Structure probing data (DMS and 2A3) for a 177-nucleotide construct. For 2A3 the reverse transcriptase was SuperScript II with manganese. It was measured as part of the RMDB library OK1LIB. The reactions ran in a buffer of 150 mM KOAc, 10 mM MgCl2 and 150 mM bicine (pH 8.5), at 24 C. The DMS profile rests on 71,958 reads.
[RMDB]
RNA sequence: GGGAACGACUCGAGUAGAGUCGAAAACUGCACUACGACUGCCAGUAGGUGUCCGGUGUCGGGAGAUCGGACGGACACUACCGAUGACGAUGAUGCAACUGAGUAUCGGAGUGCAUUUGAAUGCAGGGCGGUAAUGGUCCUUCGGGAUCGUUAUCGCAAAAGAAACAACAACAACAAC
Reactivity to DMS in 0.01 (KOAc 150mM, MgCl2 10mM, bicine 150mM(pH8.5), 24C), signal-to-noise 9, nucleotides 027 to 126: c050u000g010c010a020c040u010a080c040g010a030c130u010g010c010c000a110g010u010a080g020g020u000g000u000c000c000g000g000u040g000u010c010g000g000g010a140g000a120u020c040g000g000a050c030g000g000a020c020a060c000u000a110c010c020g000a040u010g000a050c030g010a170u010g000a090u020g000c120a110a100c040u000g000a260g010u010a050u000c010g000g000a120g010u020g010c000a020u000u000u010g010a140a100u020g000c060a040g000g000
Reactivity to 2A3 in 0.01 (KOAc 150mM, MgCl2 10mM, bicine 150mM(pH8.5), 24C), signal-to-noise 9, nucleotides 027 to 126: c010u010g000c000a000c010u060a020c010g030a010c030u030g000c000c000a010g010u050a050g000g060u000g000u000c000c000g030g020u080g050u020c000g000g010g020a070g010a070u090c010g020g040a010c000g020g000a010c020a010c010u020a020c000c010g030a020u040g050a020c010g020a030u120g000a010u060g010c000a020a030c020u010g000a000g000u010a010u000c000g000g010a020g000u050g000c000a000u040u020u090g060a060a020u060g010c030a020g050g040